The record gives the reactivity of an RNA of 207 nucleotides to DMS and 2A3. For DMS, 8,389 sequencing reads were counted. The reactions ran in a buffer of 150 mM KOAc, 10 mM MgCl2 and 150 mM bicine (pH 8.5), at 24 C.
RNA sequence: GGGAACGACUCGAGUAGAGUCGAAAAAACGUUGCAUGAUCGUAAAACAUGCCCGGCUUACCGUGAGCCGCCUUUGAAAGAAAGGUUUAAACGGACUCUGUUGCGUUACGCACGUACCUAACUUGUGAAAACGGCAUCUUGUUCGCAAGAUGCCGAACACCCAUAGUAUGUUCGCAUACUAUGGGUGAAAAGAAACAACAACAACAAC
Reactivity to DMS in 0.01 (KOAc 150mM, MgCl2 10mM, bicine 150mM(pH8.5), 24C), signal-to-noise 3, nucleotides 027 to 156: a100a060c030g010u000u010g020c000a010u000g010a070u000c000g020u010a020a040a020a030c050a030u010g000c000c040c010g020g000c000u020u000a090c060c070g000u010g010a080g040c010c010g010c000c000u010u020u000g000a200a090a300g010a070a010a020g000g010u000u000u010a020a030a100c010g020g010a170c140u010c120u000g010u000u000g020c000g040u010u000a100c050g000c070a040c090g030u000a030c030c020u000a080a090c060u000u010g030u010g010a050a050a070a180c010g030g030c000a010u000c000u010u010g010u000u010c300g020c010a030a010g010a000u000g020c000c010g000a020a030
Reactivity to 2A3 in 0.01 (KOAc 150mM, MgCl2 10mM, bicine 150mM(pH8.5), 24C), signal-to-noise 6, nucleotides 027 to 156: a000a000c000g000u000u000g000c000a000u010g020a050u180c040g080u220a090a130a000a000c000a000u000g000c000c000c000g010g000c020u060u090a080c020c010g030u040g170a010g000c000c000g020c010c010u040u000u010g040a110a040a010g030a010a010a000g030g000u030u130u150a010a000a000c000g000g020a080c030u080c080u210g140u140u030g030c020g050u060u050a050c180g030c020a010c010g030u060a060c010c030u070a100a190c070u140u140g060u050g160a030a040a030a020c000g010g000c000a000u000c000u010u000g010u020u030c050g010c090a000a000g000a000u000g000c000c000g000a000a000